[RMDB]
Structure probing data (2A3) for a 207-nucleotide construct.
2A3 adducts were read by reverse transcription with SuperScript II with manganese.
Reactivities are given for positions 27 through 156.
The data come from the RNA Mapping Database (RMDB), library RNAMAK.
RNA sequence: GGGAACGACUCGAGUAGAGUCGAAAAGGGGUCGGUCGAAGAACGCUAGUGACAUGUGUUGUCAGCUGAAGCCUCCACGGCUUGGAUUUACACAUGCCAUGCUAGCGGGAGACCGACGGAGGCACCCAAAACGAGUCCCCGUUCGCGGGGACUCGAACUCUGAAUCAAACUUCGGUUUGAUUCAGAGAAAAGAAACAACAACAACAAC
Reactivity to 2A3 in 0.01 (KOAc 150mM, MgCl2 10mM, bicine 150mM(pH8.5), 24C), signal-to-noise 1, nucleotides 027 to 156: g060g010g090g000u010c000g030g010u000c000g030a160a030g020a070a030c000g000c000u000a000g000u030g090a070c020a000u010g000u000g000u040u030g030u040c040a040g000c140u130g150a060a000g000c000c000u140c180c130a040c080g000g000c000u020u130g070g030a080u250u260u280a000c010a000c000a000u010g060c040c060a150u300g010c000u000a000g010c010g000g000g000a020g000a000c000c020g000a000c000g000g000a050g000g000c030a070c010c000c000a020a050a050a070c020g000a000g000u000c010c030c020c020g020u060u060c170g030c010g050g000g000g010a010c000u000c000g000a000a030